[RMDB]
An RNA of 177 nucleotides, treated with DMS and 2A3 and read out base by base. DMS adducts were read by reverse transcription with MarathonRT. Source: RMDB library TTRINS, as collected in RNAgym. For DMS, 12,143 sequencing reads were counted. 2A3 adducts were read by reverse transcription with SuperScript II with manganese. For 2A3, 26,707 sequencing reads were counted.
RNA sequence: GGGAACGACUCGAGUAGAGUCGAAAAGAUAUGGAUCCCUAAGGGCUGAUGACCAUGGUGAAACUGGUAUGGUCGGAAACGACCAUACCAGGAGUACGCCAUGCAAGGCCUAUGGGAUCCUAAGUCACAAAUUAGUAUACUUCGGUAUACUAAUUUGAAAAGAAACAACAACAACAAC
Reactivity to DMS in 0.01 (KOAc 150mM, MgCl2 10mM, bicine 150mM(pH8.5), 24C), signal-to-noise 4, nucleotides 027 to 126: g010a050u000a300u010g000g000a000u000c000c010c000u020a110a260g000g000g010c000u000g000a100u010g000a230c300c000a000u000g000g000u010g010a130a250a190c000u000g000g000u000a000u000g010g010u000c000g010g010a080a080a160c000g010a010c000c000a010u000a000c000c000a000g000g000a040g000u000a090c290g000c000c000a010u000g000c030a070a130g010g020c000c000u010a300u010g010g000g000a010u000c000c000u000a010a060g010u000c030a300
Reactivity to 2A3 in 0.01 (KOAc 150mM, MgCl2 10mM, bicine 150mM(pH8.5), 24C), signal-to-noise 4, nucleotides 027 to 126: g030a000u070a060u170g000g000a010u010c000c000c050u010a190a190g070g000g000c020u040g040a300u180g040a150c100c020a000u010g000g000u150g030a040a040a090c010u000g000g000u010a000u000g010g000u010c030g010g030a050a060a020c010g000a010c000c000a000u000a000c000c000a000g000g000a000g000u000a020c180g000c000c010a010u000g000c000a050a110g010g000c000c000u010a030u030g000g000g000a000u020c000c000u000a020a020g020u010c010a010